[RMDB]
RNA sequence: GGGAACGACUCGAGUAGAGUCGAAAAAUCCCCGUUUUUUGAUAAAAACGGCAAUGAAAUAGAGUCUGACUAAAUUUUAUUGAUAUAGCAACGAUAAUAACCGGAAAUUUCUUCCAGAUCUUUCCGGCAAGUCCUCUUAGUUCGCUAAGAGGACUUGAAAAGAAACAACAACAACAAC
Reactivity to DMS in 0.01 (KOAc 150mM, MgCl2 10mM, bicine 150mM(pH8.5), 24C), signal-to-noise 1, nucleotides 027 to 126: a170u070c000c000c000c040g020u000u000u000u000u000u000g000a180u050a010a010a010a010a010c000g000g000c000a020a050u020g000a000a070a050u010a040g000a040g020u000c200u030g020a100c030u020a080a020a080u030u000u000u000a020u000u010g000a180u000a040u030a080g010c100a150a040c120g020a100u000a010a100u030a060a250c000c010g020g020a000a000a020u000u000u000c000u000u040c180c180a080g020a000u000c010u000u010u000c010c000g000g000
Reactivity to 2A3 in 0.01 (KOAc 150mM, MgCl2 10mM, bicine 150mM(pH8.5), 24C), signal-to-noise 2, nucleotides 027 to 126: a000u010c020c000c000c000g030u010u010u000u010u010u090g220a050u120a100a040a000a000a010c020g050g010c010a000a080u050g090a090a010a000u110a070g180a010g090u120c220u260g050a060c040u140a020a170a110u060u040u040u060a090u020u050g030a010u050a010u060a290g050c110a120a170c060g040a010u120a230a030u200a070a130c000c030g020g040a000a000a000u050u020u000c010u190u170c050c030a010g000a000u010c000u000u000u010c000c000g010g000

The record gives the reactivity of an RNA of 177 nucleotides to DMS and 2A3. For 2A3, 510 sequencing reads were counted. Source: RMDB library RFM100, as collected in RNAgym. Values cover nucleotides 27 to 126. In probing experiments dimethyl sulfate is read out at A N1 and C N3, which are open when not base-paired.